Chemical mapping of a 207-nucleotide RNA with 2A3. The 2A3 profile rests on 1,049 reads.
[RMDB]
RNA sequence: GGGAACGACUCGAGUAGAGUCGAAAACUGCCUAAAAACCAGCUAGCGUGACUUCUACAAGAUUGCUUGUGUCCUGUUAGAAGUCUCAAAAUAGCAAGCUACGGUUACGAAAUUGUCUAGUUUCGUGACAAGAGAUUGAUAGACUCGCAAACUAAUGGACUAGAAACUUGUUCGCAAGUUUCUAGUCAAAAGAAACAACAACAACAAC
Reactivity to 2A3 in 0.01 (KOAc 150mM, MgCl2 10mM, bicine 150mM(pH8.5), 24C), signal-to-noise 1, nucleotides 027 to 156: c010u060g010c000c010u070a060a080a030a020a020c060c020a070g050c060u110a020g040c030g170u030g020a010c000u000u000c000u000a010c000a000a000g000a020u010u060g000c000u000u020g000u000g010u030c000c000u020g000u010u030a000g000a000a000g020u000c040u040c060a000a010a010a040u110a000g020c000a010a000g000c000u000a000c000g000g000u000u000a000c000g000a000a000a000u080u070g000u000c010u010a000g000u000u000u000c000g000u000g000a000c000a000a000g000a000g010a030u110u210g080a010u010a000g000a010c000u030c120g140c100a140a000a060c060u180a150a060u140g060